Conditions: 150 mM KOAc, 10 mM MgCl2 and 150 mM bicine (pH 8.5), 24 C. This 207-nucleotide RNA was probed chemically with 2A3. The 2A3 profile rests on 709 reads. 2A3 adducts were read by reverse transcription with SuperScript II with manganese.
RNA sequence: GGGAACGACUCGAGUAGAGUCGAAAACCCCAAAACCUUACACUGAGAGCAUUUAGCCUGAUUACUCUUUAAAUCAAAUCAGGCCAUAGAGAGAAACUCGAGAGGUGAAAACCCCACAGCAUUCUGAAACGGUUACUCGGGUUCGCCCGAGUAACAACUAUCUAAAUGCGUUCGCGCAUUUAGAUAGAAAAGAAACAACAACAACAAC
Reactivity to 2A3 in 0.01 (KOAc 150mM, MgCl2 10mM, bicine 150mM(pH8.5), 24C), signal-to-noise 2, nucleotides 027 to 156: c000c000c000c050a080a090a060a120c010c040u160u210a010c080a060c130u240g080a030g000a000g040c020a060u020u020u070a040g010c010c000u020g000a000u000u040a030c010u020c100u050u300u270a050a060a030u270c070a010a000a020u000c000a000g020g000c000c000a000u060a010g060a000g000a000g020a110a100a030c000u030c060g060a060g010a030g150g000u020g000a020a000a000a060c060c010c020c000a070c040a010g090c050a080u070u050c010u110g060a050a110a070c040g030g030u000u000a000c000u000c010g000g040g000u010u050c110g070c000c000c000g000a000g000u000a000a000c000a000a000